[RMDB]
RNA sequence: GGGAACGACUCGAGUAGAGUCGAAAACUCACGCCAUCAGCGCGCAGACUCGCCCUGCUCUGACAGCGGCCCAGACCUCACACGGGCAUACGUGUUACUCGCUAGCACGCGGAUCUGUGUAAUGACAUGCCCCAUGCACAGACCCGAGCCCCAUCCAAAUUUACGGAUAGUUCGCUAUCCGUAAAUUAAAAGAAACAACAACAACAAC
Reactivity to DMS in 0.01 (KOAc 150mM, MgCl2 10mM, bicine 150mM(pH8.5), 24C), signal-to-noise 2, nucleotides 027 to 156: c030u000c020a070c040g030c000c020a150u000c060a130g010c040g000c120g030c020a080g020a110c070u010c060g020c050c030c010u010g000c030u010c050u000g050a090c000a100g000c040g020g000c020c020c010a080g030a180c060c070u010c050a140c090a100c090g020g020g030c030a160u000a060c020g020u000g020u000u000a010c030u000c130g010c070u010a040g020c000a050c000g000c000g000g010a040u010c000u000g020u000g000u000a050a080u000g040a170c100a100u010g020c040c050c040c010a210u000g020c000a030c020a040g010a040c000c000c010g000a130g000c020c010c010c000a120u010c010c020a150
Reactivity to 2A3 in 0.01 (KOAc 150mM, MgCl2 10mM, bicine 150mM(pH8.5), 24C), signal-to-noise 3, nucleotides 027 to 156: c020u010c020a030c020g000c020c010a160u070c080a120g030c040g010c020g000c170a020g050a130c040u040c070g040c020c000c010u010g010c010u020c050u100g040a060c030a050g020c020g040g000c010c010c010a080g020a140c000c030u160c040a080c030a040c090g000g000g000c020a040u090a110c000g000u010g020u020u020a030c040u040c240g010c070u010a000g000c000a000c020g040c010g000g010a040u000c010u010g030u020g030u070a260a180u030g060a050c060a150u250g060c010c000c010c010a000u000g000c000a000c000a020g000a000c000c000c000g010a020g020c020c010c000c000a080u100c030c020a090